[RMDB]
RNA sequence: GGGAACGACUCGAGUAGAGUCGAAAAACGGUGCGGAAGUUCGCGCUUCCGUGAAACGCGAAAAUCGGACGGUGGCUGCAAAUCGCAUCGCAAAACCGCGGCAAGUGGAGUUAGCGAGAGGAGGCUGAAACCAUCCAACACUUCGGUGUUGGAUGAACAGAUAUCCAGUCUUCGGACUGGAUAUCUGAAAAGAAACAACAACAACAAC
Reactivity to DMS in 0.01 (KOAc 150mM, MgCl2 10mM, bicine 150mM(pH8.5), 24C), signal-to-noise 1, nucleotides 027 to 156: a040c000g010g010u020g010c010g000g030a040a080g040u010u020c150g000c170g040c000u000u010c000c100g030u000g020a020a030a040c010g050c050g000a060a070a160a100u000c070g000g000a130c050g060g040u000g030g050c000u010g070c050a070a100a110u010c000g000c020a120u000c040g050c020a040a070a060a110c050c020g030c090g110g000c040a100a010g070u000g010g000a100g000u000u000a140g000c010g000a080g010a120g030g010a100g020g000c020u030g020a060a060a130c200c000a010u020c010c000a010a020c000a010c000u000u000c300g050g000u020g030u010u030g010g000a010u000g010a020a040
Reactivity to 2A3 in 0.01 (KOAc 150mM, MgCl2 10mM, bicine 150mM(pH8.5), 24C), signal-to-noise 2, nucleotides 027 to 156: a000c020g000g030u020g000c010g040g030a050a020g060u070u090c050g040c010g000c050u030u020c000c010g020u040g040a160a070a010c090g040c020g080a050a010a020a160u170c040g020g010a010c010g000g030u020g030g020c060u100g000c060a040a070a070u160c030g010c010a020u010c010g000c020a070a070a000a020c050c010g040c030g000g020c060a090a070g020u090g030g030a030g010u050u080a020g040c050g060a010g000a020g090g010a000g010g020c030u020g040a070a020a000c040c000a000u020c000c000a000a000c000a010c010u050u110c280g070g020u010g010u000u000g010g000a000u000g000a000a010